Source: RMDB library OK2TST, as collected in RNAgym.
The record gives the reactivity of an RNA of 177 nucleotides to DMS.
Values cover nucleotides 27 to 126.
The RNA was probed in 150 mM KOAc, 10 mM MgCl2 and 150 mM bicine (pH 8.5) at 24 C.
For DMS, 690 sequencing reads were counted.
[RMDB]
RNA sequence: GGGAACGACUCGAGUAGAGUCGAAAAGCUAUCUGGGCCCCGACUUUUCUCUCCCGUAAAAAUCUUAGAAAAUGGCGCUCAUUAAGGCCACUCAGCACAUUUGGGUUGAUUUUUCAAAUAUUUGAAAAUAGCCUCAUUUAUUCGUAAAUGAGGCUAUAAAAGAAACAACAACAACAAC
Reactivity to DMS in 0.01 (KOAc 150mM, MgCl2 10mM, bicine 150mM(pH8.5), 24C), signal-to-noise 1, nucleotides 027 to 126: g020c050u000a040u020c050u000g040g000g030c000c040c070c050g050a090c050u000u000u020u000c030u010c080u000c000c000c050g030u000a040a060a070a050a020u010c060u010u000a140g010a050a040a110a060u000g000g020c240g010c040u010c030a040u020u030a140a160g010g000c000c020a050c140u000c090a060g000c070a050c030a090u000u000u000g000g020g000u000u000g000a070u020u000u000u000u020c000a110a020a130u020a060u000u000u010g000a080a050a080